The record gives the reactivity of an RNA of 177 nucleotides to DMS. For DMS the reverse transcriptase was MarathonRT.
RNA sequence: GGGAACGACUCGAGUAGAGUCGAAAACUAAGAUACGUGAGACGCAGAUUCGAAUGAAGAUGGUGAAUGAUGAACCGGAGAUUUCGCCACCGGAUGUUCAGGAAUUGUUCAAGAGCUUAAACGCGAAUCCUCCUACUCCUUUCGAGGAGUAGGAGGAAAAAGAAACAACAACAACAAC
Reactivity to DMS in 0.01 (KOAc 150mM, MgCl2 10mM, bicine 150mM(pH8.5), 24C), signal-to-noise 2, nucleotides 027 to 126: c020u000a120a100g000a150u010a080c050g000u000g000a080g010a090c090g020c110a070g010a160u000u000c080g020a040a060u000g000a200a090g000a030u000g000g020u020g010a050a040u010g000a180u000g000a090a120c060c050g000g010a040g000a210u000u000u000c000g000c000c010a070c010c000g020g000a100u000g010u000u000c040a070g020g000a050a050u000u000g010u000u000c130a040a080g010a060g010c020u010u010a050a050a090c210g000c040g000a090a040

Conditions: 150 mM KOAc, 10 mM MgCl2 and 150 mM bicine (pH 8.5), 24 C.
Source: RMDB library OK2TST, as collected in RNAgym.